[RMDB]
RNA sequence: GGGAACGACUCGAGUAGAGUCGAAAAGAUAUGGAAGAUGUAUUCCCAUCUCGCACUCGAGGUAGCUCGGAAACGAGCUACUACCCACCGAGUGAACUACGAGUUUGGGAAUACAUCUUCCUAAGUCCCUUACAUUCCUCUUCGGAGGAAUGUAAGGAAAAGAAACAACAACAACAAC
Reactivity to DMS in 0.01 (KOAc 150mM, MgCl2 10mM, bicine 150mM(pH8.5), 24C), signal-to-noise 2, nucleotides 027 to 126: g020a100u000a230u000g010g000a000a010g020a020u060g000u010a010u000u000c010c020c000a010u010c000u000c000g010c050a030c000u000c000g000a080g030g000u000a030g030c000u000c000g000g010a100a140a250c000g000a010g000c000u030a010c010u000a000c050c060c110a300c160c000g000a020g010u000g000a070a060c180u010a300c000g000a030g000u010u000u000g060g010g000a000a000u000a000c000a000u000c000u000u000c000c000u000a000a050g000u000c020

This 177-nucleotide RNA was probed chemically with DMS. The data come from the RNA Mapping Database (RMDB), library TTRINS. The RNA was probed in 150 mM KOAc, 10 mM MgCl2 and 150 mM bicine (pH 8.5) at 24 C. The DMS profile rests on 1,276 reads.